Structure probing data (2A3 and DMS) for a 207-nucleotide construct.
The DMS profile rests on 14,413 reads.
The reactions ran in a buffer of 150 mM KOAc, 10 mM MgCl2 and 150 mM bicine (pH 8.5), at 24 C.
It was measured as part of the RMDB library OK3TST.
For 2A3 the reverse transcriptase was SuperScript II with manganese.

RNA sequence: GGGAACGACUCGAGUAGAGUCGAAAACAAGGUGUCGUGGUGGCACGCACCGCAAGAGCCUGCUCUCAUUCACGUGUGUAAGAUUGCACGUGCAUUGAUCGAGCGCGGCGAGGAAGCGGUACUCGUUGAGUACCAGCGUGAGGCGGGCACCGUUGCCAAGCAGUAUUUAAUUCGUUAAAUACUGCUUAAAAGAAACAACAACAACAAC
Reactivity to 2A3 in 0.01 (KOAc 150mM, MgCl2 10mM, bicine 150mM(pH8.5), 24C), signal-to-noise 9, nucleotides 027 to 156: c060a060a070g020g000u060g040u110c300g300u170g130g050u090g120g020c020a010c020g000c010a050c000c020g000c030a070a060g010a020g060c000c030u040g010c010u000c000u000c000a000u020u010c000a000c010g000u010g010u010g040u120a170a120g090a300u260u270g020c010a000c000g000u000g000c020a030u020u100g020a070u110c140g010a000g000c020g020c110g030g000c010g010a080g010g070a120a030g040c080g040g000u000a010c020u010c050g300u120u300g020a000g000u010a020c000c030a020g000c010g010u040g010a040g030g130c080g020g010g000c000a010c010c020g060u050u090g040c020c000
Reactivity to DMS in 0.01 (KOAc 150mM, MgCl2 10mM, bicine 150mM(pH8.5), 24C), signal-to-noise 4, nucleotides 027 to 156: c060a100a090g020g010u000g020u000c020g040u010g010g020u000g030g020c020a060c030g020c010a090c010c020g000c050a050a120g020a300g020c020c020u020g050c000u010c010u000c010a040u000u000c000a010c000g020u000g010u000g030u000a120a170g010a200u000u000g000c000a000c020g020u000g010c080a010u000u000g000a030u000c120g010a030g050c020g020c080g020g020c020g020a150g000g010a110a070g020c060g030g030u000a010c000u000c010g000u000u010g010a060g030u000a020c000c000a030g000c040g020u000g000a120g000g010c020g010g000g020c000a020c030c010g020u010u000g010c020c070